Annotation:
An RNA of 177 nucleotides, treated with DMS and 2A3 and read out base by base. The reactions ran in a buffer of 150 mM KOAc, 10 mM MgCl2 and 150 mM bicine (pH 8.5), at 24 C. High DMS reactivity at an A or C suggests that its Watson-Crick edge is free.
[RMDB]
RNA sequence: GGGAACGACUCGAGUAGAGUCGAAAAAGUAUGAACGAAAGUGCGCAAAUCAAGUGCGAUUUAGUGCUUAUAGGAGGAUCGUCAUAUCUUCCCGGUCUGGCGGACGUUCUGAAAAAGCAUCGGAGCGCCUACUUUUGGCGUUCGCGCCAAAAGUAGGAAAAGAAACAACAACAACAAC
Reactivity to DMS in 0.01 (KOAc 150mM, MgCl2 10mM, bicine 150mM(pH8.5), 24C), signal-to-noise 1, nucleotides 027 to 126: a000g000u010a070u000g000a180a020c030g010a010a080a110g020u000g040c000g020c120a020a010a040u020c030a120a150g080u000g040c110g000a040u000u000u000a070g030u000g000c000u000u010a040u000a140g020g010a100g030g020a160u030c000g000u000c010a010u000a070u000c050u000u000c020c020c010g080g010u000c050u000g060g010c090g000g040a050c070g000u040u010c050u010g010a090a070a080a110a100g000c240a030u000c010g050g000a070g030c050g000
Reactivity to 2A3 in 0.01 (KOAc 150mM, MgCl2 10mM, bicine 150mM(pH8.5), 24C), signal-to-noise 1, nucleotides 027 to 126: a000g060u040a040u090g060a140a020c050g050a100a020a090g080u080g000c020g030c040a010a010a010u010c010a110a000g190u050g230c040g060a010u040u080u000a060g000u020g030c000u090u060a210u180a060g050g030a090g000g050a070u070c010g010u030c050a000u010a040u110c030u050u000c040c000c000g030g120u050c020u030g000g150c120g050g050a030c020g060u150u000c000u000g000a000a070a080a130a090g070c030a010u160c050g020g010a020g100c010g090
About this RNA:
For 2A3, 580 sequencing reads were counted.